RNA sequence: GGGAACGACUCGAGUAGAGUCGAAAAGCACUAUGCUGAAGCAGAACGUAUGCUUGGCGUGACUGAUAAUAAAAUUUUCGGCCCUGCCGACCACAUGCUAAAGAAAAUGGGUGAAGCAGUCGGUGUAAGCCAUUUACCAUUUCGAUGGUAAAUGGCUAAAAGAAACAACAACAACAAC
Reactivity to DMS in 0.01 (KOAc 150mM, MgCl2 10mM, bicine 150mM(pH8.5), 24C), signal-to-noise 2, nucleotides 027 to 126: g010c070a010c050u000a060u010g010c000u000g000a110a050g020c020a070g000a070a110c200g020u020a050u010g000c050u000u000g000g010c030g020u000g000a070c050u010g000a060u000a070a130u000a030a080a080a290u010u020u010u000c030g010g010c010c030c040u000g010c010c000g000a070c070c080a070c020a030u000g010c010u020a060a110a120g010a010a070a070a060u000g000g000g000u000g020a100a090g020c040a030g000u010c060g000g010u000g000u000a060
Reactivity to 2A3 in 0.01 (KOAc 150mM, MgCl2 10mM, bicine 150mM(pH8.5), 24C), signal-to-noise 1, nucleotides 027 to 126: g020c010a000c050u120a070u220g000c020u070g030a050a000g030c030a010g040a220a030c060g140u200a030u130g010c000u000u040g020g000c010g010u040g040a060c030u020g070a030u020a170a030u090a040a150a050a150u080u090u030u070c030g000g020c050c040c030u010g050c020c000g010a010c000c020a060c010a040u110g050c030u210a170a060a070g160a010a130a040a000u060g000g050g000u040g040a040a010g050c040a010g020u050c040g000g010u040g030u040a000